[RMDB]
RNA sequence: GGGAACGACUCGAGUAGAGUCGAAAAUUUAGAACCCAGGUAGCAGCAGCCAUUCCUAUUUUUGUUGCCUAGGGACUAGAGCUUUGAUGUUCCUGCUGUUUGAAAGGGUGGGACAGGAGACCUGUUCUGAUUUUACACUAUUCGUAGUGUAAAAUCAAAAAGAAACAACAACAACAAC
Reactivity to DMS in 0.01 (KOAc 150mM, MgCl2 10mM, bicine 150mM(pH8.5), 24C), signal-to-noise 8, nucleotides 027 to 126: u000u000u000a050g010a090a220c010c000c010a030g010g010u000a040g010c010a030g010c170a060g010c070c090a120u000u000c030c030u010a070u010u010u000u010u000g010u000u000g000c040c030u000a060g010g000g010a170c040u000a040g000a040g000c140u010u000u010g010a130u010g000u000u000c010c000u010g010c050u010g010u010u010u000g020a090a100a100g010g000g030u000g010g010g010a040c020a050g000g010a140g010a110c060c030u000g010u000u000c080
Reactivity to 2A3 in 0.01 (KOAc 150mM, MgCl2 10mM, bicine 150mM(pH8.5), 24C), signal-to-noise 4, nucleotides 027 to 126: u010u010u000a040g010a060a080c000c000c000a000g030g000u030a010g010c030a010g010c020a020g020c030c040a100u080u050c040c010u090a210u090u130u010u110u080g040u020u030g010c000c000u060a060g020g000g000a000c020u010a010g010a020g090c040u060u070u100g120a130u160g040u070u050c000c000u010g000c020u040g060u070u160u150g180a220a100a040g070g020g000u030g010g010g010a000c000a000g060g010a060g040a060c010c030u020g060u070u020c020